[RMDB]
RNA sequence: GGGAACGACUCGAGUAGAGUCGAAAAGAAAGAAAGAAAGCUGACCCUUCUGCUGACGGAUCUUGUGGAGCACCACAGUGCAGAAGGGGAGAGAAGCUUUAAUGCCGACCGUCUGCGCAGCCUUGAAAAAACGGAUUCUUCUUCGGAAGAAUCCGAACAAUCGUAAAGUGUUCGCACUUUACGAUUGAAAAGAAACAACAACAACAAC
Reactivity to 2A3 in 0.01 (KOAc 150mM, MgCl2 10mM, bicine 150mM(pH8.5), 24C), signal-to-noise 3, nucleotides 027 to 156: g060a010a060a000g050a040a070a000g050a030a040a000g000c060u070g080a070c000c000c000u010u010c010u000g000c030u060g030a050c060g100g040a070u100c040u100u100g000u020g020g060a140g150c100a120c060c000a020c030a040g050u030g060c000a000g000a020a000g000g000g000g000a000g000a000g010a030a000g000c000u050u070u030a090a040u070g040c010c020g010a040c010c020g010u010c030u010g030c010g010c030a030g050c010c020u060u080g100a080a040a010a010a010a060c010g000g000a000u000u000c000u000u000c000u000u030c050g000g000a000a000g000a000a000u010c000c000g000a010a000
Reactivity to DMS in 0.01 (KOAc 150mM, MgCl2 10mM, bicine 150mM(pH8.5), 24C), signal-to-noise 2, nucleotides 027 to 156: g000a160a130a110g000a110a080a090g000a100a070a060g000c040u000g010a120c000c000c010u000u000c000u000g040c020u020g020a150c080g040g000a060u010c020u000u010g020u010g020g010a180g010c230a070c020c010a040c020a110g020u020g000c000a030g010a010a010g000g020g000g000a030g000a110g020a160a050g010c000u000u020u010a070a110u000g020c020c000g010a110c030c010g010u000c040u000g000c060g030c050a100g000c030c020u000u000g000a000a080a060a070a110a110c020g030g010a040u000u010c000u000u000c000u000u000c270g000g000a040a020g000a010a020u010c000c000g050a010a070

Structure probing data (2A3 and DMS) for a 207-nucleotide construct. The RNA was probed in 150 mM KOAc, 10 mM MgCl2 and 150 mM bicine (pH 8.5) at 24 C. Reactivities are given for positions 27 through 156.